[RMDB]
RNA sequence: GGGAACGACUCGAGUAGAGUCGAAAAUCGCUAACAUGUUCGAAUCAUAACGUCGGGCACUGACAAAGAGCGCCACGCUGAUAACCGUGAAACUGAAGUGACACAAGGGAUUUACCCAGAUCCUACGGUCAAUUGACUCCUUCGGGAGUCAAUUGACAAAAGAAACAACAACAACAAC
Reactivity to 2A3 in 0.01 (KOAc 150mM, MgCl2 10mM, bicine 150mM(pH8.5), 24C), signal-to-noise 2, nucleotides 027 to 126: u030c000g000c080u070a050a070c050a200u110g030u020u080c050g010a000a040u040c010a100u150a200a100c000g050u010c030g000g030g000c010a010c040u030g040a030c000a040a130a060g080a000g030c000g030c000c000a020c000g000c000u010g030a050u040a200a080c080c000g030u030g000a040a000a000c010u060g020a070a000g080u000g050a020c000a000c070a300a130g000g050g000a000u090u000u220a110c010c010c000a000g000a000u010c000c000u040a050c050g120
Reactivity to DMS in 0.01 (KOAc 150mM, MgCl2 10mM, bicine 150mM(pH8.5), 24C), signal-to-noise 1, nucleotides 027 to 126: u000c000g070c050u010a040a260c180a240u000g010u000u000c040g030a000a000u000c100a040u030a090a300c190g010u000c000g000g000g000c130a000c100u010g000a150c300a060a080a300g000a020g050c070g000c000c000a060c000g000c080u000g060a110u020a000a060c030c090g020u070g000a150a060a050c140u000g010a030a000g000u000g000a020c140a190c050a050a040g050g000g000a000u000u000u000a140c030c000c010a110g000a030u000c010c000u000a050c090g000
Structure probing data (2A3 and DMS) for a 177-nucleotide construct. The reactions ran in a buffer of 150 mM KOAc, 10 mM MgCl2 and 150 mM bicine (pH 8.5), at 24 C. The DMS profile rests on 889 reads.